[RMDB]
RNA sequence: GGGAACGACUCGAGUAGAGUCGAAAAGAUAUGGAUUAGGCUUUUGACGCGAUUCACAUCGGAAACGAUGUUAUUUCGCGAUAAGCCUACGGUCCUAAGUCAAAACCAUCAAGUUCGCUUGAUGGAACCAGACCACAAUGUUCGCAUUGUGGUCUGGAAAAGAAACAACAACAACAAC
Reactivity to DMS in 0.01 (KOAc 150mM, MgCl2 10mM, bicine 150mM(pH8.5), 24C), signal-to-noise 2, nucleotides 027 to 126: g010a000u000a210u010g000g020a040u010u030a020g020g000c010u010u000u010u000g020a230c000g050c000g010a000u010u000c300a010c000a000u000c000g010g000a160a060a180c000g030a010u030g010u010u000a040u000u000u000c000g060c000g010a040u000a000a020g010c000c000u020a000c300g000g000u000c000c000u010a040a240g010u040c030a130a080a110a130c000c000a020u000c010a030a000g000u000u000c300g010c010u000u000g010a040u000g000g000a030a060
Reactivity to 2A3 in 0.01 (KOAc 150mM, MgCl2 10mM, bicine 150mM(pH8.5), 24C), signal-to-noise 1, nucleotides 027 to 126: g040a030u090a020u100g010g000a010u080u070a010g010g010c000u110u060u100u190g230a180c050g010c000g000a000u000u040c080a000c000a010u030c010g000g000a020a050a020c020g000a000u010g000u020u000a110u010u180u080c030g020c010g020a020u010a010a000g030c000c000u010a030c020g000g000u000c000c000u010a110a010g000u050c060a010a030a090a180c030c000a000u000c010a000a020g030u080u090c240g120c140u000u010g000a010u040g010g000a000a030
This 177-nucleotide RNA was probed chemically with DMS and 2A3.
Source: RMDB library TTRDEL, as collected in RNAgym.
For 2A3, 2,360 sequencing reads were counted.
Conditions: 150 mM KOAc, 10 mM MgCl2 and 150 mM bicine (pH 8.5), 24 C.